[RMDB]
RNA sequence: GGGAACGACUCGAGUAGAGUCGAAAAGCCUGCGUUCAGGGCGGUAGUAAGGAGACGUGAAAACAAUGUGCGGGCAAAAAACGCACUAGAUACAGGAGGACAAGACUGGUGCCAGCACCCGCGGUAAGGAAAUCUAACUUUUCGAAGUUAGAUUUCCAAAAGAAACAACAACAACAAC
Reactivity to 2A3 in 0.01 (KOAc 150mM, MgCl2 10mM, bicine 150mM(pH8.5), 24C), signal-to-noise 5, nucleotides 027 to 126: g020c000c000u050g020c040g040u020u080c050a050g000g060g000c010g020g010u040a030g010u020a050a080g060g030a030g020a030c050g030u060g080a070a060a010a030c070a080a100u160g020u040g040c010g000g030g050c140a090a050a030a020a020a020c040g000c010a010c000u010a010g010a030u120a080c040a020g040g030a030g020g060a070c020a100a000g040a040c010u030g010g000u010g020c020c020a020g050c020a070c000c010c010g020c040g010g020u090a100a040
Reactivity to DMS in 0.01 (KOAc 150mM, MgCl2 10mM, bicine 150mM(pH8.5), 24C), signal-to-noise 7, nucleotides 027 to 126: g010c010c010u000g010c070g010u010u000c070a080g000g000g020c020g010g000u010a060g020u020a050a100g010g000a070g000a050c080g000u010g000a050a080a090a100c170a090a090u020g010u010g020c010g010g000g000c160a010a040a060a060a060a070c160g000c000a000c000u010a020g000a110u040a090c120a130g000g020a100g010g010a080c100a080a090g000a090c020u010g000g000u000g010c010c090a060g010c180a150c010c020c010g010c060g010g010u030a070a080

Structure probing data (2A3 and DMS) for a 177-nucleotide construct. The RNA was probed in 150 mM KOAc, 10 mM MgCl2 and 150 mM bicine (pH 8.5) at 24 C.